An RNA of 177 nucleotides, treated with DMS and 2A3 and read out base by base.

RNA sequence: GGGAACGACUCGAGUAGAGUCGAAAAAACUCCUUUCAGCCUUCUGACUCCUGGAGUAAUGAAGGCUGCUUUUUUCGUUACACCCUUCCCCGGCAGCGCCGGUGGCAGUGUUCAGCCCUUUUCCGGGCAAGGGGCACUGGUUCGCCAGUGCCCCUUGAAAAGAAACAACAACAACAAC
Reactivity to DMS in 0.01 (KOAc 150mM, MgCl2 10mM, bicine 150mM(pH8.5), 24C), signal-to-noise 1, nucleotides 027 to 126: a020a080c160u020c010c060u020u010u000c040a020g010c070c030u000u000c000u020g000a160c080u010c010c110u010g000g010a000g000u000a010a030u020g040a030a000g000g050c000u010g000c040u020u030u000u060u050u020c160g000u000u000a080c110a050c060c010c040u000u000c000c000c000c000g000g000c000a120g030c290g050c020c010g000g040u010g000g040c280a050g020u000g000u000u020c110a060g030c000c000c060u000u000u000u000c080c040g000g000g040
Reactivity to 2A3 in 0.01 (KOAc 150mM, MgCl2 10mM, bicine 150mM(pH8.5), 24C), signal-to-noise 1, nucleotides 027 to 126: a020a000c110u080c000c020u030u030u050c000a000g000c010c010u020u040c000u040g060a040c010u030c010c050u080g180g030a020g000u070a040a060u090g000a000a000g000g050c000u000g000c030u150u050u070u000u010u070c030g000u000u130a020c050a080c070c020c000u000u000c020c000c000c030g010g000c070a120g090c040g020c060c000g070g000u130g010g000c020a010g020u000g020u120u060c050a010g000c000c000c000u000u000u130u060c000c010g000g000g000
The data come from the RNA Mapping Database (RMDB), library RFM100. The 2A3 profile rests on 570 reads. Conditions: 150 mM KOAc, 10 mM MgCl2 and 150 mM bicine (pH 8.5), 24 C.